[RMDB]
The record gives the reactivity of an RNA of 177 nucleotides to DMS.
For DMS, 830 sequencing reads were counted.
For DMS the reverse transcriptase was MarathonRT.
Values cover nucleotides 27 to 126.
RNA sequence: GGGAACGACUCGAGUAGAGUCGAAAAGAUAUGGAGCGGCUUCUUUGAUCUCACUGGAUCGGAAACGAUCUUGAGGGAGAAGUCGCUCCUAAGUCAAAACAUGGGUGUCGUUCGCGACACCCAUGAAUCUACGCAACAUGUUCGCAUGUUGCGUAGAAAAAGAAACAACAACAACAAC
Reactivity to DMS in 0.01 (KOAc 150mM, MgCl2 10mM, bicine 150mM(pH8.5), 24C), signal-to-noise 1, nucleotides 027 to 126: g010a050u000a170u010g000g000a010g040c000g000g000c010u000u000c000u010u010u050g010a130u000c010u010c000a070c300u040g010g010a010u000c000g030g020a070a060a130c000g010a000u010c010u010u000g000a060g020g010g010a020g010a020a030g030u000c010g030c000u000c010c000u010a000a070g000u010c000a080a060a170a250c000a000u010g000g010g000u010g020u000c010g010u000u000c190g060c020g090a010c000a000c010c010c000a000u000g020a060a070